[RMDB]
The data come from the RNA Mapping Database (RMDB), library OK1LIB. Structure probing data (2A3 and DMS) for a 177-nucleotide construct. 2A3 adducts were read by reverse transcription with SuperScript II with manganese. Reactivities are rounded to 0.1 and cut off at 0 and 3. The RNA was probed in 150 mM KOAc, 10 mM MgCl2 and 150 mM bicine (pH 8.5) at 24 C.

RNA sequence: GGGAACGACUCGAGUAGAGUCGAAAAAGACUGAUAGGGUCAGUAGAUUCUGCUUGAUAUAGGCAGUAUCAAUCAGGUAUCUGUUCAUUAAUGGUCCUGUAGAGGACGUAGAUUAAUACGUCCUCAAGAAUAUCUGAUUUUUCGAAAUCAGAUAUUCAAAAGAAACAACAACAACAAC
Reactivity to 2A3 in 0.01 (KOAc 150mM, MgCl2 10mM, bicine 150mM(pH8.5), 24C), signal-to-noise 8, nucleotides 027 to 126: a000g060a020c060u070g030a120u130a170g090g010g030u020c020a010g060u070a030g020a010u030u000c000u000g010c010u010u020g040a010u050a010u050a100g190g020c100a020g020u000a000u010c010a010a020u020c000a010g000g040u070a030u020c000u020g090u100u070c040a070u050u160a100a050u100g020g000u010c000c000u010g050u060a040g000a000g000g000a000c000g000u000a010g010a070u100u200a100a060u030a020c000g000u000c000c000u000c000a000a000
Reactivity to DMS in 0.01 (KOAc 150mM, MgCl2 10mM, bicine 150mM(pH8.5), 24C), signal-to-noise 7, nucleotides 027 to 126: a090g000a100c090u010g000a080u020a030g010g000g000u000c000a050g000u010a050g000a030u000u000c000u000g000c090u000u000g010a030u000a040u010a080g040g010c250a150g000u000a010u000c000a020a020u010c010a020g000g010u030a020u000c000u000g020u010u020c140a080u030u030a090a110u010g000g000u000c010c010u000g000u010a060g000a000g000g000a000c000g020u000a000g010a140u050u050a140a110u000a000c000g000u000c000c000u000c000a030a060